[RMDB]
RNA sequence: GGGAACGACUCGAGUAGAGUCGAAAAUCUAUGUGUCUUUUACCAGUACCAUGCUGUUUGGGUUACUGUAGCAUUGUAGUAUAGUUUGAAGUUAGGUAAUGUGAUGGCUUUGGCUUUAUUCUUUUUGCUUAGGAUUGCCUUGCCCAUUCAUCAACCACACUCCGGUACGAUUCGUCGUACCGGAGUGAAAAGAAACAACAACAACAAC
Reactivity to 2A3 in 0.01 (KOAc 150mM, MgCl2 10mM, bicine 150mM(pH8.5), 24C), signal-to-noise 2, nucleotides 027 to 156: u040c020u020a060u020g040u000g090u090c080u050u050u050u050a080c030c040a010g000u010a020c010c010a100u050g020c030u110g090u300u090u040g100g000g000u180u100a090c020u060g010u000a000g000c000a010u070u160g040u000a020g000u070a020u010a170g100u130u050u120g150a120a050g000u070u040a010g030g020u120a060a030u070g030u090g020a060u030g000g000c000u020u000u030g000g020c000u090u060u090a060u030u030c000u020u110u090u250u220g110c080u050u010a000g010g000a050u030u040g000c000c000u010u020g000c000c000c000a010u060u080c020a030u030c000a000a030c010c020a040